[RMDB]
RNA sequence: GGGAACGACUCGAGUAGAGUCGAAAACACCGCGCUCUACCGCGGCAACGACAAGAAGAUGCGCACCGAGGAGGUCGACGCCGAACGGGCCGACUACCUACGUUACCUAUCGGUGGUGCGGGACAACAGGACUCCAAAAAUUCGUUUUUGGAGUCCUAAAAGAAACAACAACAACAAC
Reactivity to DMS in 0.01 (KOAc 150mM, MgCl2 10mM, bicine 150mM(pH8.5), 24C), signal-to-noise 3, nucleotides 027 to 126: c150a190c040c010g010c010g000c060u000c110u000a040c050c000g040c300g000g000c040a010a020c040g000a080c140a080a040g000a070a040g010a110u020g040c100g000c030a040c030c010g000a090g020g000a300g010g020u000c040g040a080c160g020c020c030g010a110a110c170g020g000g010c010c010g020a060c020u000a170c060c020u000a110c030g000u000u000a040c000c020u010a140u010c020g010g000u000g010g010u010g010c010g020g010g000a080c120a080a070c100
Reactivity to 2A3 in 0.01 (KOAc 150mM, MgCl2 10mM, bicine 150mM(pH8.5), 24C), signal-to-noise 2, nucleotides 027 to 126: c040a010c010c010g020c000g020c050u140c080u190a080c010c040g000c070g080g000c030a030a000c010g150a040c050a100a040g090a070a000g090a110u140g070c100g000c070a090c030c010g010a040g030g050a060g010g030u010c020g020a050c160g020c010c000g080a170a120c050g030g000g000c000c000g030a000c010u040a080c000c010u010a030c020g030u040u050a020c000c000u050a070u260c020g000g020u040g000g000u000g030c030g000g000g000a020c030a100a030c020